RNA sequence: GGGAACGACUCGAGUAGAGUCGAAAACAAGCAGGCACUGGGAGGCUGAACAGGACUUUUCCCCGGUGGACCCAGUGUGAGCAUGGGAUCAGGAAUGAUUGCAGGCAGAGGCACAAGGAUGGGAAGAGGAAUGAGGGUAACCUGUGCAGAAAGUCGACAUUAGCUGCGGAUUCGUCCGCAGCUAAUGAAAAGAAACAACAACAACAAC
Reactivity to 2A3 in 0.01 (KOAc 150mM, MgCl2 10mM, bicine 150mM(pH8.5), 24C), signal-to-noise 1, nucleotides 027 to 156: c080a000a030g110c060a090g060g040c010a000c030u010g000g000g010a060g120g020c000u080g040a050a050c040a130g020g040a020c060u180u080u040u030c000c000c000c000g120g010u110g060g050a080c050c030c030a040g000u010g050u020g040a000g020c060a070u130g070g030g000a040u060c070a030g060g110a020a060u100g090a170u140u230g030c030a020g040g020c060a030g010a060g060g030c090a000c010a070a050g070g030a010u080g010g060g060a000a000g020a010g100g040a050a010u160g000a060g000g000g000u000a010a010c000c040u060g000u000g060c000a010g070a010a070a000g050u060c090g000a000
An RNA of 207 nucleotides, treated with 2A3 and read out base by base.
The RNA was probed in 150 mM KOAc, 10 mM MgCl2 and 150 mM bicine (pH 8.5) at 24 C.
For 2A3 the reverse transcriptase was SuperScript II with manganese.